The record gives the reactivity of an RNA of 177 nucleotides to 2A3 and DMS.
[RMDB]
RNA sequence: GGGAACGACUCGAGUAGAGUCGAAAACACGCGAACUCUGGCUGCUCUUGACCGAGGAGACAGCGAGAAGGCAGCAGCGCUCUUCAAGACCUGGUCGCCGGGCAGUGCAAGGAACGGCGAGGAGGCGCGAUAUGAUACAGUUCGCUGUAUCAUAUCGAAAAGAAACAACAACAACAAC
Reactivity to 2A3 in 0.01 (KOAc 150mM, MgCl2 10mM, bicine 150mM(pH8.5), 24C), signal-to-noise 9, nucleotides 027 to 126: c060a010c040g030c020g040a110a040c020u010c010u070g150g000c010u010g010c010u010c020u070u140g120a220c060c060g070a070g040g010a010g060a060c030a010g000c030g020a030g020a020a050g080g000c070a020g010c020a020g020c050g020c030u090c020u160u080c050a100a110g090a240c010c020u070g120g040u040c010g000c020c010g000g030g000c070a080g060u120g160c050a060a050g090g030a080a020c000g010g000c010g010a040g040g060a010g010g000c030g000
Reactivity to DMS in 0.01 (KOAc 150mM, MgCl2 10mM, bicine 150mM(pH8.5), 24C), signal-to-noise 9, nucleotides 027 to 126: c100a110c110g010c030g010a110a130c050u000c020u000g010g010c010u000g010c040u000c010u000u000g010a120c150c110g010a080g010g000a040g010a080c040a030g010c030g000a050g010a050a070g010g010c060a120g000c070a090g010c060g010c040u010c040u000u000c070a070a090g010a140c030c020u000g010g000u000c020g020c020c020g000g000g020c040a100g010u000g000c190a090a100g010g000a060a080c030g010g000c020g010a050g000g000a040g010g010c060g000
The DMS profile rests on 21,240 reads. Conditions: 150 mM KOAc, 10 mM MgCl2 and 150 mM bicine (pH 8.5), 24 C. Source: RMDB library OK2TRN, as collected in RNAgym.